[RMDB]
RNA sequence: GGGAACGACUCGAGUAGAGUCGAAAACAGGUGUGAGCCGCUGCGCCCAGCCUUUUUUUCUUUUUUUUAAGAGACAGGGUCUCACUCUGUUGCCCAGGCUGGAGUGCAGUGAUGUGAUCUCAGCUCACAGCAGCCUCAACCUCCUGGGCUCAAGCAGUGCUGUAUCUUUUUUCGAAAAGAUACAGCAAAAAGAAACAACAACAACAAC
Reactivity to 2A3 in 0.01 (KOAc 150mM, MgCl2 10mM, bicine 150mM(pH8.5), 24C), signal-to-noise 2, nucleotides 027 to 156: c020a020g070g040u030g010u000g050a010g010c030c030g020c010u010g000c000g000c000c010c010a040g010c080c020u120u110u120u060u090u170u110c060u220u190u130u110u030u030u150u200a070a010g030a000g030a000c010a010g020g030g030u060c090u070c160a030c010u010c040u000g010u000u040g030c020c050c020a000g010g010c020u010g020g010a260g050u030g030c000a020g020u020g010a030u020g010u020g040a040u010c030u000c070a020g000c020u000c010a010c010a000g070c010a000g030c000c010u070c060a070a090c010c050u120c030c040u090g000g020g030c030u020c060a080a000g120c050a010g080
Reactivity to DMS in 0.01 (KOAc 150mM, MgCl2 10mM, bicine 150mM(pH8.5), 24C), signal-to-noise 1, nucleotides 027 to 156: c060a080g010g020u020g030u010g010a030g020c040c030g050c020u000g010c040g030c010c010c000a070g000c010c000u000u000u000u000u000u000u000c010u010u000u000u000u000u000u000u000a070a060g010a150g000a030c050a050g020g000g020u000c140u000c140a080c020u000c020u000g020u000u000g030c060c050c070a070g030g040c010u010g000g030a090g070u000g010c020a010g040u010g000a050u000g030u030g020a110u010c020u000c050a150g020c070u000c020a030c010a060g020c070a080g020c020c010u000c030a080a110c040c020u000c040c040u000g020g020g020c010u000c080a050a140g010c100a130g000